[RMDB]
This 207-nucleotide RNA was probed chemically with DMS and 2A3.
Conditions: 150 mM KOAc, 10 mM MgCl2 and 150 mM bicine (pH 8.5), 24 C.
RNA sequence: GGGAACGACUCGAGUAGAGUCGAAAAUAGCGCUAUCAAUCUUAACAUUAGUGGAUUUGCAAAGAUUUUCGAUAACAUCGGCGGCACGAGCAGAUCCGGGAUAGAAGUUAUCUACGGCGAGGCGAUCGAAAGUAUAAGCAUAGUUAUACAAGAAAGCACAUAGCUGUGGAUUCGUCCACAGCUAUGUAAAAGAAACAACAACAACAAC
Reactivity to DMS in 0.01 (KOAc 150mM, MgCl2 10mM, bicine 150mM(pH8.5), 24C), signal-to-noise 2, nucleotides 027 to 156: u000a090g020c100g000c030u000a070u010c030a080a060u000c030u000u000a140a120c040a150u000u010a100g000u000g040g030a090u000u010u000g020c010a100a100a130g010a060u000u010u000u000c030g000a100u000a050a060c040a300u000c060g010g040c070g020g010c050a090c040g010a150g000c080a050g010a030u000c030c030g010g030g010a080u000a040g010a040a080g020u000u010a080u000c030u010a040c050g030g030c020g010a030g030g000c060g020a060u000c000g010a050a060a110g000u000a060u010a030a060g010c130a100u000a120g030u000u010a050u000a040c020a060a090g000a040a080a100g010c060
Reactivity to 2A3 in 0.01 (KOAc 150mM, MgCl2 10mM, bicine 150mM(pH8.5), 24C), signal-to-noise 4, nucleotides 027 to 156: u050a000g050c020g010c050u060a040u120c040a130a030u000c050u140u200a130a130c080a130u150u190a070g020u110g080g000a070u040u030u060g010c040a050a090a060g050a050u050u090u090u150c040g030a020u020a070a000c030a110u050c020g030g000c030g030g000c060a010c100g010a030g000c020a000g020a030u000c000c000g010g020g000a010u030a030g100a120a040g050u090u070a060u070c030u040a050c020g040g010c010g010a030g030g000c010g010a010u010c020g040a080a020a020g030u020a020u000a040a000g020c030a040u060a080g050u020u050a030u010a040c010a010a060g080a060a040a010g090c060

The data come from the RNA Mapping Database (RMDB), library OK3TST. The 2A3 profile rests on 1,977 reads.